[RMDB]
RNA sequence: GGGAACGACUCGAGUAGAGUCGAAAAGCGCUAGAGGUCUGGCAGAAGAUCAUUGCGCGUAACCGCCAGCGCCCUGCGGGUGUAGAUAAACCGUUCAACCGAGUGAGCGUCUACACCACGCCAGAAGGCUACCGUUUCGUAUAUGACACCUGGGGCCCGAGAAUCAGGGAUUCGUCCCUGAUUCUCGAAAAGAAACAACAACAACAAC
Reactivity to 2A3 in 0.01 (KOAc 150mM, MgCl2 10mM, bicine 150mM(pH8.5), 24C), signal-to-noise 1, nucleotides 027 to 156: g000c010g000c030u020a000g050a070g250g030u020c010u040g100g140c100a100g030a270a000g010a050u000c030a100u040u130g010c030g000c000g020u020a000a020c030c010g010c060c010a030g020c040g050c070c010c000u010g020c030g000g030g010u000g000u000a010g010a020u100a080a160a100c040c010g000u120u140c060a150a130c200c070g000a060g030u080g050a030g030c070g000u000c000u000a000c000a020c010c000a020c000g000c000c010a090g000a120a100g040g000c030u070a080c060c010g000u020u000u060c060g030u040a090u040a060u270g060a060c050a030c070c010u040g020g000g020g040c050c000

This 207-nucleotide RNA was probed chemically with 2A3.
The reactions ran in a buffer of 150 mM KOAc, 10 mM MgCl2 and 150 mM bicine (pH 8.5), at 24 C.
It was measured as part of the RMDB library OK3TST.
Reactivities are given for positions 27 through 156.